[RMDB]
RNA sequence: GGGAACGACUCGAGUAGAGUCGAAAAGGCGCUGACCUGCUGGUAGAAGGUGCCGUACGCAGUGAAGAGCGCCGCCUGCAGCGCCGAAACCUCAUCGAGGGCCGCCGGAGCGAUGGCUGUGGUGGGCACCACCCGGACCAUUCGUGGUCCGGGUGGUAAAAGAAACAACAACAACAAC
Reactivity to DMS in 0.01 (KOAc 150mM, MgCl2 10mM, bicine 150mM(pH8.5), 24C), signal-to-noise 1, nucleotides 027 to 126: g000g000c010g030c050u000g000a230c170c010u010g020c050u000g030g010u000a090g010a090a090g020g000u000g010c080c040g040u000a050c180g020c020a030g010u000g010a080a070g000a090g010c010g020c020c000g010c020c030u010g000c020a060g000c020g010c010c030g010a050a120a130c050c000u010c050a060u010c110g010a070g010g020g020c030c050g000c000c020g000g000a090g020c010g000a100u020g000g000c010u000g000u010g020g010u000g020g020g000c060
Reactivity to 2A3 in 0.01 (KOAc 150mM, MgCl2 10mM, bicine 150mM(pH8.5), 24C), signal-to-noise 2, nucleotides 027 to 126: g000g000c000g040c010u030g000a100c020c050u030g020c080u100g060g010u050a040g080a300a050g040g140u040g040c040c000g030u040a010c120g080c050a050g000u060g230a090a010g070a070g180c010g000c010c000g020c000c010u050g000c010a020g030c000g010c000c060g000a040a050a040c000c010u080c050a230u100c050g060a060g000g010g090c030c020g010c020c010g020g020a070g030c030g110a150u180g120g000c040u050g110u000g300g000u070g060g010g020c030